[RMDB]
RNA sequence: GGGAACGACUCGAGUAGAGUCGAAAAGCAUGGGCCCCAGUUCCGAACGAAGAGACCGCCGGGGAAGGGGGGCGAACCGACGGGAGUUCAAUGGUAAAGAGGCGAAGAACCUCGGAGGUUCCCUCCCAACACGAACAGUUCGCUGUUCGUAAAAGAAACAACAACAACAAC
Reactivity to 2A3 in 0.01 (KOAc 150mM, MgCl2 10mM, bicine 150mM(pH8.5), 24C), signal-to-noise 9, nucleotides 027 to 129: g070c060a080u130g010g030g010c000c000c000c000a020g020u100u050c020c020g030a040a030c030g020a040a050g020a010g030a070c020c040g030c020c010g030g000g010g020a030a110g030g010g000g000g000g000c120g000a010a000c000c000g030a020c000g010g010g010a180g010u010u010c030a060a070u080g030g010u090a130a160a040g090a050g080g060c070g050a090a040g040a060a040c000c000u000c010g000g000a010g000g000u010u000c000c000c000u010c000c000c000a020a020c040
Reactivity to DMS in 0.01 (KOAc 150mM, MgCl2 10mM, bicine 150mM(pH8.5), 24C), signal-to-noise 9, nucleotides 027 to 129: g040c070a060u050g010g010g000c030c020c030c030a110g010u040u010c000c030g000a070a080c090g020a050a050g000a080g010a070c060c060g010c050c070g010g000g000g000a060a090g050g000g020g000g030g020c170g030a020a030c040c000g020a170c060g000g000g000a130g030u010u010c020a090a090u030g000g010u050a070a080a080g040a090g000g020c040g000a090a130g000a030a020c030c020u030c010g020g010a140g000g020u000u000c000c000c000u000c000c010c010a040a040c140

The record gives the reactivity of an RNA of 170 nucleotides to 2A3 and DMS. Conditions: 150 mM KOAc, 10 mM MgCl2 and 150 mM bicine (pH 8.5), 24 C. The 2A3 profile rests on 95,343 reads. DMS adducts were read by reverse transcription with MarathonRT.